[RMDB]
RNA sequence: GGGAACGACUCGAGUAGAGUCGAAAAUCGUGCGAAAGCACGUUAGACGUCGUAGGAUAUGUAGGAUAUUCCUACAUGAGGAUCACCCAUGUUGACAUGGAAGAAGGACAGAAGGACGAUGUCCAUAAAUAUUUAGCGUGUUCGCACGCUAAAUAUUAAAAGAAACAACAACAACAAC
Reactivity to 2A3 in 0.01 (KOAc 150mM, MgCl2 10mM, bicine 150mM(pH8.5), 24C), signal-to-noise 4, nucleotides 027 to 126: u040c000g000u000g000c010g050a140a000a030g020c010a010c000g000u020u030a060g010a010c010g020u020c000g010u040a030g090g040a090u030a000u220g030u000a010g030g020a060u030a180u300u200c010c000u000a000c010a000u020g040a060g090g050a110u040c010a050c020c010c000a000u040g090u110u300g150a140c010a040u010g050g020a120a110g040a060a020g150g010a000c040a050g110a110a010g080g010a000c010g030a020u030g000u000c010c010a020u200a100
Reactivity to DMS in 0.01 (KOAc 150mM, MgCl2 10mM, bicine 150mM(pH8.5), 24C), signal-to-noise 7, nucleotides 027 to 126: u010c010g060u000g010c000g000a140a100a190g010c000a010c000g020u010u000a040g000a040c020g020u000c000g010u000a040g020g020a140u010a020u000g010u000a020g010g000a220u010a180u000u000c000c000u000a010c010a010u010g010a130g010g000a100u000c040a130c120c000c000a020u000g000u010u000g010a100c060a020u000g000g010a090a080g030a100a110g000g000a070c050a100g000a100a130g010g000a050c010g000a030u000g010u000c010c060a040u000a070

An RNA of 177 nucleotides, treated with 2A3 and DMS and read out base by base. The 2A3 profile rests on 4,439 reads. Conditions: 150 mM KOAc, 10 mM MgCl2 and 150 mM bicine (pH 8.5), 24 C. 2A3 adducts were read by reverse transcription with SuperScript II with manganese. It was measured as part of the RMDB library OK2TRN.